Record summary
Structure probing data (DMS) for a 177-nucleotide construct. Conditions: 150 mM KOAc, 10 mM MgCl2 and 150 mM bicine (pH 8.5), 24 C. The DMS profile rests on 1,009 reads.
[RMDB]
RNA sequence: GGGAACGACUCGAGUAGAGUCGAAAAGAUUUUCGAGGAAAUACUCCCAAGAAGUUCCCGGAGGGAUCCAAGAGACGGACGACUUUCCCCCAUUGGUUGGGAAAAGUCCCGGAACCAGGAAAUGGGACUUUAUAUGAUAGUUCGCUAUCAUAUAAAGAAAAGAAACAACAACAACAAC
Reactivity to DMS in 0.01 (KOAc 150mM, MgCl2 10mM, bicine 150mM(pH8.5), 24C), signal-to-noise 2, nucleotides 027 to 126: g000a130u000u010u010u000c010g020a100g030g000a070a100a110u000a040c030u010c020c100c200a080a060g010a030a300g000u000u000c000c000c000g030g000a070g020g000g010a200u000c010c010a100a150g010a140g010a160c060g000g000a050c170g010a060c030u000u030u000c020c000c000c020c030a300u010u000g000g020u010u010g000g000g000a020a050a000a010g000u000c000c010c010g010g000a110a160c010c030a110g000g010a010a130a090u010g000g000g000a140